[RMDB]
RNA sequence: GGGAACGACUCGAGUAGAGUCGAAAACCGACUCUGUGGAACCGCGUUCGGCAACAUACCGUCAACGUGUCAUUGGCUUGUGUGUCAUUGAGAUCCCCGGCCAGGCGCAUUAACCGAUCUGCACGUAUAUUGAAUACCACUUCGGUGGUAUUCAAUAAAAAGAAACAACAACAACAAC
Reactivity to 2A3 in 0.01 (KOAc 150mM, MgCl2 10mM, bicine 150mM(pH8.5), 24C), signal-to-noise 9, nucleotides 027 to 126: c010c000g060a060c020u030c030u060g050u070g070g040a050a050c020c020g020c000g040u030u020c040g060g020c020a050a030c020a140u190a060c020c020g070u050c040a040a020c040g050u040g050u090c030a060u020u100g020g010c030u070u090g030u040g020u030g020u110c020a090u040u100g030a040g010a110u090c010c010c000c000g010g000c010c010a020g020g000c020g000c010a020u060u070a050a040c010c010g020a040u000c030u080g020c040a010c060g050u060a040
Reactivity to DMS in 0.01 (KOAc 150mM, MgCl2 10mM, bicine 150mM(pH8.5), 24C), signal-to-noise 5, nucleotides 027 to 126: c080c000g020a100c050u020c040u030g030u010g010g020a100a110c090c040g010c100g000u000u020c030g000g020c040a080a070c140a100u030a070c070c060g020u010c090a080a030c050g000u020g010u000c270a050u000u010g000g010c030u010u000g020u010g010u020g000u000c030a080u010u010g000a110g010a120u010c010c010c010c030g020g010c050c030a040g000g010c030g020c030a040u000u020a110a080c050c030g000a030u010c050u010g010c040a030c060g000u020a120
Notes
Source: RMDB libraries RFM100 and RFMREP, as collected in RNAgym. Structure probing data (2A3 and DMS) for a 177-nucleotide construct. Values are in units of 0.01, from 0 to 300, in steps of 10. The RNA was probed in 150 mM KOAc, 10 mM MgCl2 and 150 mM bicine (pH 8.5) at 24 C. Values cover nucleotides 27 to 126.